Chemical mapping of a 177-nucleotide RNA with 2A3.
[RMDB]
RNA sequence: GGGAACGACUCGAGUAGAGUCGAAAAGUGGGUCACGCGUUGAUCAACCAACUUGACGCCCAAGCCAGCGAGGAAGAACUGGGCGGCACGCUGUGCUGCGCGCUGGCCAACCGGUUACGCAUCACCACGGUCACGCGUGAUUCGUCACGCGUGACCGAAAAGAAACAACAACAACAAC
Reactivity to 2A3 in 0.01 (KOAc 150mM, MgCl2 10mM, bicine 150mM(pH8.5), 24C), signal-to-noise 2, nucleotides 027 to 126: g040u020g000g050g010u110c020a000c040g000c100g110u080u050g020a060u090c090a000a010c000c000a000a070c030u010u100g040a020c060g010c000c000c000a000a010g000c010c020a050g000c000g220a050g050g030a100a140g130a070a170c070u120g130g040g000c000g020g000c070a070c110g300c250u260g000u000g060c000u000g020c000g010c000g030c000u000g010g000c000c000a000a000c030c000g030g000u070u100a020c000g000c000a080u010c000a020c030c020a000
Conditions: 150 mM KOAc, 10 mM MgCl2 and 150 mM bicine (pH 8.5), 24 C. Reactivities are given for positions 27 through 126.